The record gives the reactivity of an RNA of 177 nucleotides to DMS and 2A3.
For 2A3, 858 sequencing reads were counted.
High DMS reactivity at an A or C suggests that its Watson-Crick edge is free.
DMS adducts were read by reverse transcription with MarathonRT.
For 2A3 the reverse transcriptase was SuperScript II with manganese.
The data come from the RNA Mapping Database (RMDB), library OK2TST.
Reactivities are given for positions 27 through 126.
RNA sequence: GGGAACGACUCGAGUAGAGUCGAAAACACGUUCUGCUGGAGAACCCUUCAUAGGGCUAGUAACCAUAAUUUGAUCAUUUUUCUUUUGCAUUUCUGCACCAAUACCUACAAAAUCACCUGAAACACCUCAUAGGCAUGCAUUCGUGCAUGCCUAUGAAAAAGAAACAACAACAACAAC
Reactivity to DMS in 0.01 (KOAc 150mM, MgCl2 10mM, bicine 150mM(pH8.5), 24C), signal-to-noise 1, nucleotides 027 to 126: c080a150c060g010u040u000c060u000g000c080u010g000g000a130g000a110a090c040c020c010u010u010c170a110u020a090g000g000g030c050u010a140g020u010a080a130c030c060a110u000a050a050u010u010u030g000a070u030c060a090u000u010u020u000u000c020u000u000u000u000g010c030a100u000u000u000c060u000g010c030a030c060c020a010a040u010a060c070c020u000a080c090a070a030a010a040u000c050a080c020c050u010g010a020a110a070c100a150c120c130
Reactivity to 2A3 in 0.01 (KOAc 150mM, MgCl2 10mM, bicine 150mM(pH8.5), 24C), signal-to-noise 1, nucleotides 027 to 126: c030a000c020g030u070u030c020u040g060c010u000g040g040a040g030a130a080c000c010c000u050u050c080a120u120a140g000g000g020c020u030a010g000u050a020a060c000c020a030u080a290a130u180u050u220g070a040u090c050a080u060u060u000u110u030c030u060u020u040u010g000c000a030u000u040u100c050u050g000c010a010c020c000a000a000u030a090c020c020u020a030c060a000a080a030a100u070c000a070c080c000u050g000a050a020a060c030a040c020c010